[RMDB]
RNA sequence: GGGAACGACUCGAGUAGAGUCGAAAAUGCUGAUAACGCAUGAGGUUUACAUGUCAUUUUCAGCUGAGGAGCGUGAGCAAAUUGAUGUCACUGCACUUGGUGAUGUUGCACUUCGUGGCGUGAAUGAACCUGAGCAGGAGUUCGCUCCUGCUCAGGUAAAAGAAACAACAACAACAAC
Reactivity to 2A3 in 0.01 (KOAc 150mM, MgCl2 10mM, bicine 150mM(pH8.5), 24C), signal-to-noise 1, nucleotides 027 to 126: u050g020c010u010g000a040u050a040a010c040g000c030a010u020g020a070g100g240u150u150u230a050c010a010u080g100u090c040a000u090u000u080u000c020a000g010c030u010g040a000g000g030a100g000c040g030u050g040a050g090c110a020a090a120u200u150g090a050u230g070u010c010a010c030u120g030c130a110c130u030u050g000g080u000g000a030u000g100u190u100g030c020a010c010u000u040c090g050u010g080g040c000g030u100g000a020a030u120g000a020
Reactivity to DMS in 0.01 (KOAc 150mM, MgCl2 10mM, bicine 150mM(pH8.5), 24C), signal-to-noise 2, nucleotides 027 to 126: u010g010c030u020g010a070u000a060a050c300g020c010a030u000g000a140g050g020u050u000u020a110c070a030u000g020u010c020a150u020u000u000u000c050a020g010c010u000g000a100g000g010a130g000c030g030u010g000a100g000c060a050a110a150u000u000g020a060u000g000u000c010a020c020u000g020c090a060c160u000u000g000g000u020g000a050u000g000u000u020g030c060a060c060u000u000c030g090u010g020g000c010g010u000g010a050a080u010g010a060